[RMDB]
RNA sequence: GGGAACGACUCGAGUAGAGUCGAAAACCCCUUCAGUUCGCUGAAGGGGAAAGGCUUCUCCCGCCCGCCGUGAACCCAGGCUAAAAGUUAAGGUAGGUGGGCAAACCCUACUCUUCGGAGUAGGGAACUAGAAAGUAAACUUCGGUUUACUUUCUAGAAAAGAAACAACAACAACAAC
Reactivity to DMS in 0.01 (KOAc 150mM, MgCl2 10mM, bicine 150mM(pH8.5), 24C), signal-to-noise 4, nucleotides 027 to 126: c000c000c000c000u000u000c000a000g000u000u020c220g010c000u000g010a010a000g000g000g000g000a010a020a050g020g010c120u000u000c050u000c010c060c060g010c000c000c000g040c000c000g030u010g010a070a070c070c010c030a270g010g010c030u000a060a070a100a100g010u000u000a100a100g000g000u000a120g010g030u000g010g010g010c040a020a060a110c010c000c000u000a010c000u000c000u000u010c160g000g000a010g010u010a010g010g010g000a010a030
Reactivity to 2A3 in 0.01 (KOAc 150mM, MgCl2 10mM, bicine 150mM(pH8.5), 24C), signal-to-noise 5, nucleotides 027 to 126: c010c000c000c000u000u000c000a050g010u010u120c160g010c090u000g000a000a010g000g000g000g020a040a050a020g080g000c050u100u020c030u070c060c000c020g010c000c000c000g010c010c010g020u030g070a040a040c000c000c020a030g080g030c020u080a200a190a060a130g070u100u080a100a020g030g000u020a010g010g000u020g000g000g000c000a010a000a030c000c000c010u000a010c000u000c000u030u050c220g090g000a000g000u000a000g010g010g000a000a000

Source: RMDB library M2PK50, as collected in RNAgym.
Structure probing data (DMS and 2A3) for a 177-nucleotide construct.
Conditions: 150 mM KOAc, 10 mM MgCl2 and 150 mM bicine (pH 8.5), 24 C.
Values cover nucleotides 27 to 126.